[RMDB]
RNA sequence: GGGAACGACUCGAGUAGAGUCGAAAAAGCCGUAAUGGCAGGAAGCGAACGAACGUCGGAACAGGGAAACUCAAGUCAAUCUGGGGCCCGUGAAAAGGCGAGUACGGUGUUCGUACCGAGAUCCGACCACUCAUAUAUUCUUCGGAAUAUAUGAGUGAAAAGAAACAACAACAACAAC
Reactivity to 2A3 in 0.01 (KOAc 150mM, MgCl2 10mM, bicine 150mM(pH8.5), 24C), signal-to-noise 5, nucleotides 027 to 126: a000g030c030c000g020u130a160a080u250g010g000c010a020g040g020a080a030g040c030g040a010a010c010g010a050a010c010g020u010c020g020g020a050a060c030a080g020g010g000a070a100a070c020u020c070a070a070g060u060c030a060a190u060c030u030g020g000g060g120c010c020c030g030u060g010a050a080a000a000g070g010c030g010a020g020u040a020c020g020g030u060g030u060u070c000g000u010a020c030c010g010a020g010a060u020c010c000g020a040c020
Reactivity to DMS in 0.01 (KOAc 150mM, MgCl2 10mM, bicine 150mM(pH8.5), 24C), signal-to-noise 6, nucleotides 027 to 126: a080g010c010c010g020u010a130a090u020g010g030c010a070g010g010a100a100g020c040g010a070a040c040g020a070a210c060g010u010c010g010g010a120a120c070a120g000g000g000a140a100a070c030u000c110a050a080g000u010c150a060a190u000c040u000g020g000g010g010c010c000c000g020u000g000a060a080a080a140g000g010c030g010a070g010u000a060c020g010g000u000g000u010u000c020g010u000a050c040c020g000a090g000a070u000c010c000g010a170c150
This 177-nucleotide RNA was probed chemically with 2A3 and DMS. For DMS, 7,326 sequencing reads were counted. The data come from the RNA Mapping Database (RMDB), library RFMREP. DMS adducts were read by reverse transcription with MarathonRT.